[RMDB]
RNA sequence: GGGAACGACUCGAGUAGAGUCGAAAAGAUAUGGAUAAUAGGGAGCUGAUGGUCGGAAACGACCAUACAGCAUCGAUCUAUAUCCUAAGUCAAAACACCUUACGCCUCUUCGGAGGCGUAAGGUGAACGACUCUAAUUUGUUCGCAAAUUAGAGUCGAAAAGAAACAACAACAACAAC
Reactivity to 2A3 in 0.01 (KOAc 150mM, MgCl2 10mM, bicine 150mM(pH8.5), 24C), signal-to-noise 1, nucleotides 027 to 126: g010a000u000a010u060g000g010a000u070a240a030u020a300g070g000g000a030g010c020u010g000a010u000g000g000u000c010g030g000a040a040a020c010g000a000c000c030a000u040a080c010a000g000c020a020u260c000g000a010u010c000u020a010u000a000u020c000c000u030a070a010g030u010c000a000a000a090a140c000a000c000c000u000u000a010c040g020c020c000u090c070u160u140c300g150g050a000g080g000c000g000u000a000a000g020g000u000g000a000a000
Reactivity to DMS in 0.01 (KOAc 150mM, MgCl2 10mM, bicine 150mM(pH8.5), 24C), signal-to-noise 1, nucleotides 027 to 126: g000a020u000a080u010g000g000a000u010a110a090u000a020g000g000g000a010g010c020u000g000a050u000g000g020u000c000g010g000a030a030a060c000g010a000c000c000a000u000a030c000a000g030c000a150u010c130g000a120u010c000u000a110u000a040u000c010c010u000a020a120g000u010c020a090a060a070a220c030a020c010c000u010u000a000c000g020c000c000u000c030u000u000c200g010g010a030g020g020c000g020u010a000a000g000g020u000g010a030a050